[RMDB]
This 177-nucleotide RNA was probed chemically with DMS and 2A3. The 2A3 profile rests on 5,401 reads. The reactions ran in a buffer of 150 mM KOAc, 10 mM MgCl2 and 150 mM bicine (pH 8.5), at 24 C. For 2A3 the reverse transcriptase was SuperScript II with manganese. It was measured as part of the RMDB library TTRDES. The DMS profile rests on 1,698 reads.
RNA sequence: GGGAACGACUCGAGUAGAGUCGAAAAGAUAUGGAAUCAGUUGGGAGUCCCAUAUCGGAAACGAUAUGUGGACGAAGAACAACGAUUCCUAAGUCAAAACUCUCCUACCGUUCGCGGUAGGAGAGAAGUGCUUUCAUUAGUUCGCUAAUGAAAGCACAAAAGAAACAACAACAACAAC
Reactivity to DMS in 0.01 (KOAc 150mM, MgCl2 10mM, bicine 150mM(pH8.5), 24C), signal-to-noise 1, nucleotides 027 to 126: g000a000u000a020u020g000g000a040a000u000c000a150g020u000u000g000g010g000a060g010u010c000c000c000a030u010a010u000c010g020g010a010a020a010c010g010a000u000a000u010g000u000g040g000a020c010g000a060a080g000a220a300c000a000a000c000g000a000u000u000c000c000u000a000a060g000u010c000a070a080a110a180c000u000c000u000c000c000u000a000c000c020g010u000u000c290g020c020g010g000u000a010g000g000a000g010a000g000a050a080
Reactivity to 2A3 in 0.01 (KOAc 150mM, MgCl2 10mM, bicine 150mM(pH8.5), 24C), signal-to-noise 2, nucleotides 027 to 126: g000a000u000a010u080g000g010a000a010u000c060a170g010u020u020g010g010g000a020g000u010c020c000c000a000u000a020u000c010g000g040a000a010a010c010g000a000u020a000u000g210u300g000g010a000c010g020a050a020g000a000a000c000a000a010c000g000a000u010u000c000c000u000a000a000g010u000c020a010a030a070a300c010u000c000u000c020c000u000a010c000c000g080u070u100c300g020c030g180g000u020a000g000g010a000g000a010g000a000a000